[RMDB]
RNA sequence: GGGAACGACUCGAGUAGAGUCGAAAAACACUCUGUGGCAGAUGAACAAAACCGUCUGACACAAUUUGAGCUUGCUAUAGCAAGAAAGUCUAACCUAUUCCGGUGUUCUCUUUCCCCAUGAGACAAGCGCACCAUACAAGUUCGCUUGUAUGGUGCGAAAAGAAACAACAACAACAAC
Reactivity to 2A3 in 0.01 (KOAc 150mM, MgCl2 10mM, bicine 150mM(pH8.5), 24C), signal-to-noise 5, nucleotides 027 to 126: a000c040a010c010u050c020u020g000u010g000g010c000a000g000a030u030g050a170a100c110a120a170a020a010c060c010g000u000c000u000g010a010c000a000c010a010a010u110u050u120g030a020g010c020u010u000g000c010u100a060u090a300g020c020a000a020g010a100a110a000g090u030c040u100a050a080c010c010u020a070u050u040c010c040g010g010u030g060u060u020c030u000c000u000u020u030c010c000c000c000a060u120g020a030g000a090c030a030a060g040
Reactivity to DMS in 0.01 (KOAc 150mM, MgCl2 10mM, bicine 150mM(pH8.5), 24C), signal-to-noise 2, nucleotides 027 to 126: a080c020a190c040u000c080u000g030u000g000g000c000a040g000a020u000g000a030a080c120a160a010a090a140c300c000g000u000c000u000g040a050c000a000c010a010a050u040u030u030g000a030g000c010u000u020g000c000u020a140u000a100g000c000a010a030g020a070a100a050g020u000c000u030a010a100c060c040u020a090u000u000c020c070g020g000u000g000u000u000c030u010c050u000u000u000c030c000c000c090a000u050g010a010g030a160c090a120a010g000

An RNA of 177 nucleotides, treated with 2A3 and DMS and read out base by base. Reactivities are given for positions 27 through 126. For 2A3 the reverse transcriptase was SuperScript II with manganese. The RNA was probed in 150 mM KOAc, 10 mM MgCl2 and 150 mM bicine (pH 8.5) at 24 C. For DMS, 2,144 sequencing reads were counted.